The record gives the reactivity of an RNA of 207 nucleotides to 2A3 and DMS. 2A3 adducts were read by reverse transcription with SuperScript II with manganese. Source: RMDB library OK3TST, as collected in RNAgym. The DMS profile rests on 9,674 reads.

RNA sequence: GGGAACGACUCGAGUAGAGUCGAAAAGCUGGGCAUGGUGGCUCAUUCUGUAACUGCCCAACAGGUUCAACUUGCCUGCUGCCUAGACAGAGCUGAUUUAGCAAGACAGGAGAAUUGCCAUGGAGAAAGAGUAAUUCACACAGAGCCGGCUGUGUGGUAUCUAUAUCCUAUUCGUAGGAUAUAGAUAAAAAGAAACAACAACAACAAC
Reactivity to 2A3 in 0.01 (KOAc 150mM, MgCl2 10mM, bicine 150mM(pH8.5), 24C), signal-to-noise 7, nucleotides 027 to 156: g040c030u030g010g020g020c000a040u060g020g020u040g030g030c020u020c060a100u110u050c020u020g050u040a070a100c030u070g000c000c020c010a010a010c020a010g040g020u120u120c050a100a070c090u090u120g020c000c000u020g030c020u030g010c010c020u050a060g010a070c060a020g040a030g020c030u020g060a130u100u080u190a040g020c030a070a030g020a070c020a030g020g030a040g040a060a060u090u050g000c040c020a030u060g040g030a040g050a060a130a010g050a020g020u090a060a060u100u090c010a000c010a000c000a000g020a010g080c020c030g030g040c000u020g000u000g000u000g020g000
Reactivity to DMS in 0.01 (KOAc 150mM, MgCl2 10mM, bicine 150mM(pH8.5), 24C), signal-to-noise 4, nucleotides 027 to 156: g040c050u000g020g010g040c010a100u000g020g040u000g020g010c020u000c060a120u000u000c030u000g030u010a090a130c020u000g000c000c040c040a040a060c030a050g000g010u000u000c040a090a140c140u000u000g010c010c000u010g000c010u000g020c070c060u000a070g020a070c030a070g020a190g030c040u000g010a120u000u000u000a100g020c010a100a080g010a100c030a040g000g020a110g020a050a080u000u010g010c020c020a100u000g010g010a120g010a060a070a090g010a080g020u010a080a110u010u000c000a020c010a020c020a020g000a130g000c060c060g030g040c020u000g020u000g050u000g000g020